[RMDB]
Chemical mapping of a 177-nucleotide RNA with 2A3 and DMS. 2A3 adducts were read by reverse transcription with SuperScript II with manganese. Reactivities are rounded to 0.1 and cut off at 0 and 3. The data come from the RNA Mapping Database (RMDB), libraries RFM100 and RFMREP. The RNA was probed in 150 mM KOAc, 10 mM MgCl2 and 150 mM bicine (pH 8.5) at 24 C.
RNA sequence: GGGAACGACUCGAGUAGAGUCGAAAAUCUUCUUUCCCAGUCCGAUUCGACCAUGACGAUCAGGGUUUCUACCACGUCCAUCUUUCUCUGACUUGACUCUCUCUUCUCUUCGGAGGAUUGGGAGGAUACAAGUACACAGUUUCGACUGUGUACUUGUAAAAGAAACAACAACAACAAC
Reactivity to 2A3 in 0.01 (KOAc 150mM, MgCl2 10mM, bicine 150mM(pH8.5), 24C), signal-to-noise 9, nucleotides 027 to 126: u060c030u140u010c000u050u070u030c000c000c000a010g030u010c020c020g040a080u050u110c030g020a040c040c060a080u090g050a040c040g040a090u060c070a090g040g040g020u050u100u040c040u070a050c000c020a030c030g030u000c030c020a050u010c020u020u070u020c020u010c020u040g070a090c010u070u100g040a050c000u010c000u000c000u000c000u000u010c000u010c000u030u050c140g110g000a010g010g000a000u000u010g010g000g000a010g000g000a000u010
Reactivity to DMS in 0.01 (KOAc 150mM, MgCl2 10mM, bicine 150mM(pH8.5), 24C), signal-to-noise 4, nucleotides 027 to 126: u020c110u000u010c070u010u010u000c000c010c000a160g020u010c010c030g020a170u020u000c040g000a120c060c070a100u000g000a110c110g010a100u000c060a090g000g020g000u000u000u000c060u020a110c080c030a090c040g010u010c030c030a040u000c030u010u000u000c020u000c040u010g000a110c100u010u010g010a130c010u000c010u000c020u010c040u000u000c000u000c000u010u030c140g020g000a050g020g010a010u000u000g000g000g010a030g010g020a100u010